[RMDB]
RNA sequence: GGGAACGACUCGAGUAGAGUCGAAAACUCGGAAGUCAUGGAGCAGGACGCCGAUGGGCGCCGCACCUUCCGCUAUCUCAAGGGGCCGAUUUUUGCGCAGCUUCUGAUGGCUGACGAAAUCAACCGACUAUAUGAGCACUUUCGAGUGCUCAUAUAGAAAAGAAACAACAACAACAAC
Reactivity to DMS in 0.01 (KOAc 150mM, MgCl2 10mM, bicine 150mM(pH8.5), 24C), signal-to-noise 5, nucleotides 027 to 126: c190u010c020g000g000a040a020g000u000c150a150u010g010g000a120g020c040a100g020g010a100c010g020c010c010g010a150u010g020g000g010c010g010c010c010g010c020a110c160c010u000u000c020c020g000c200u000a040u000c030u000c040a130a120g010g000g010g020c100c090g010a020u000u000u010u010u010g020c180g000c000a030g000c010u000u000c180u000g020a100u000g010g010c010u010g000a060c040g000a010a010a050u010c020a050a110c030c020g000a270
Reactivity to 2A3 in 0.01 (KOAc 150mM, MgCl2 10mM, bicine 150mM(pH8.5), 24C), signal-to-noise 5, nucleotides 027 to 126: c010u010c010g000g010a040a010g040u110c060a180u220g070g070a180g040c130a190g060g080a160c020g020c000c000g170a300u250g230g030g000c020g000c020c000g000c010a010c000c000u010u020c010c010g000c040u050a070u060c030u010c030a080a090g040g020g010g030c070c030g010a010u000u020u010u060u160g120c220g000c010a010g010c020u110u060c070u290g100a120u230g000g000c000u010g000a020c000g010a020a000a010u020c010a030a050c000c010g030a030
Source: RMDB library OK2TST, as collected in RNAgym. An RNA of 177 nucleotides, treated with DMS and 2A3 and read out base by base. Reactivities are given for positions 27 through 126.